[RMDB]
RNA sequence: GGGAACGACUCGAGUAGAGUCGAAAAUCAAACUUAAACUGGCUCCUAUAAGGGGCCAGUGCAAACGCAACAGUUUUGUCGGGGGUUCCUGUAACAGGUCUGUUGCGUGUGCGUUUUUAUUUGACGACCGACAACUGAUGUUCGCAUCAGUUGUCGGAAAAGAAACAACAACAACAAC
Reactivity to 2A3 in 0.01 (KOAc 150mM, MgCl2 10mM, bicine 150mM(pH8.5), 24C), signal-to-noise 1, nucleotides 027 to 126: u140c050a090a070a020c090u100u200a080a060a060c000u000g000g000c000u000c000c000u150a140u010a300a170g000g080g000g000c010c010a000g000u000g000c000a020a000a000c000g000c000a010a010c020a050g000u000u000u040u000g030u000c000g110g000g000g000g030u300u300c000c000u000g020u000a030a040c000a020g040g000u000c010u000g010u000u020g000c020g000u000g000u000g000c010g000u000u030u050u060u080a300u000u120u130g040a080c060g000a040
Source: RMDB library RFM100, as collected in RNAgym. The record gives the reactivity of an RNA of 177 nucleotides to 2A3. Values are in units of 0.01, from 0 to 300, in steps of 10. 2A3 is a SHAPE reagent: it acylates the 2'-hydroxyl of flexible nucleotides of all four kinds. 2A3 adducts were read by reverse transcription with SuperScript II with manganese. Reactivities are given for positions 27 through 126.